Chemical mapping of a 177-nucleotide RNA with 2A3 and DMS. Values cover nucleotides 27 to 126. It was measured as part of the RMDB library M2PK50.

RNA sequence: GGGAACGACUCGAGUAGAGUCGAAAACCUACUGCCUUCGGGCAGUAGGAAACAGGUGCUUCUACAACCUGAAUAACUAGAUGAAACAUCUACUGUAGAAGAAAAGGAACCGCUUCGGCGGUUCCAAGCACUGUAAAUGGUUCGCCAUUUACAGUGCAAAAGAAACAACAACAACAAC
Reactivity to 2A3 in 0.01 (KOAc 150mM, MgCl2 10mM, bicine 150mM(pH8.5), 24C), signal-to-noise 1, nucleotides 027 to 126: c000c000u030a000c010u000g010c020c000u010u010c160g030g000g000c010a000g000u000a000g000g000a000a030a020c010a000g050g010u000g000c030u000u050c000u000a000c000a040a030c000c020u040g030a070a070u130a070a020c070u050a000g000a030u060g140a170a140a300c080a050u020c000u050a050c040u120g000u020a000g000a000a000g010a010a090a010a000g000g010a000a000c030c000g050c030u090u100c200g140g000c000g000g000u000u010c000c000a010a000
Reactivity to DMS in 0.01 (KOAc 150mM, MgCl2 10mM, bicine 150mM(pH8.5), 24C), signal-to-noise 1, nucleotides 027 to 126: c020c000u000a000c000u000g000c000c000u010u000c180g060g010g040c000a010g010u000a010g000g020a020a070a180c010a020g000g010u020g010c070u000u010c000u000a020c010a110a050c010c010u000g000a140a160u000a020a060c120u000a000g020a020u000g020a190a120a100c110a020u000c000u000a030c230u010g020u000a020g000a010a050g030a170a070a120a120g000g010a040a000c000c010g030c000u000u010c230g070g020c000g020g000u000u000c000c000a010a050
For DMS the reverse transcriptase was MarathonRT.